[RMDB]
Structure probing data (DMS and 2A3) for a 207-nucleotide construct. It was measured as part of the RMDB library M2RFPK. For DMS the reverse transcriptase was MarathonRT. Conditions: 150 mM KOAc, 10 mM MgCl2 and 150 mM bicine (pH 8.5), 24 C. For 2A3 the reverse transcriptase was SuperScript II with manganese.
RNA sequence: GGGAACGACUCGAGUAGAGUCGAAAAUGAACGCUUUCGAAGGAAAGCUUGACCAGCUAAUCUUCUGCAACGCCAUUACGAGGACUGCCCUUAGAGGCUCAUGGCGAUAGGUCACCCCUCCGGUCGGUUAAGAAUCAGCGAUUCGUCGCUGAUUCAACAAUAUAGGAAGAUUCGUCUUCCUAUAUUGAAAAGAAACAACAACAACAAC
Reactivity to DMS in 0.01 (KOAc 150mM, MgCl2 10mM, bicine 150mM(pH8.5), 24C), signal-to-noise 3, nucleotides 027 to 156: u000g030a090a070c090g000c010u000u000u000c040g020a240a170g010g010a030a070a020g020c010u000u000g010a080c030c040a210g010c050u000a080a120u010c050u010u000c060u000g030c030a070a120c010g030c000c020a070u000u000a110c060g030a150g020g020a090c070u010g020c000c010c010u000u010a170g010a110g000g020c020u000c070a050u000g020g010c010g000a120u000a050g020g010u000c030a090c000c000c000c020u000c020c020g000g010u000c020g000g020u020u000a060a140g010a000a000u000c000a010g030c020g000a070u000u010c300g060u000c010g010c000u010g000a010u000u000c000a030a120
Reactivity to 2A3 in 0.01 (KOAc 150mM, MgCl2 10mM, bicine 150mM(pH8.5), 24C), signal-to-noise 3, nucleotides 027 to 156: u140g020a070a030c060g010c050u050u080u090c060g090a080a060g080g030a160a080a010g000c000u020u030g010a010c000c010a010g000c040u040a110a100u110c090u150u030c050u130g020c060a080a040c020g010c010c000a040u130u190a060c110g040a060g080g060a080c090u100g020c010c000c020u070u120a100g040a110g150g000c030u020c030a010u010g000g000c010g060a100u100a060g020g000u020c000a050c000c010c000c010u000c040c010g030g050u070c010g030g000u080u080a200a040g000a000a010u000c000a000g000c000g010a010u030u050c160g040u010c000g090c000u000g000a000u000u000c000a000a000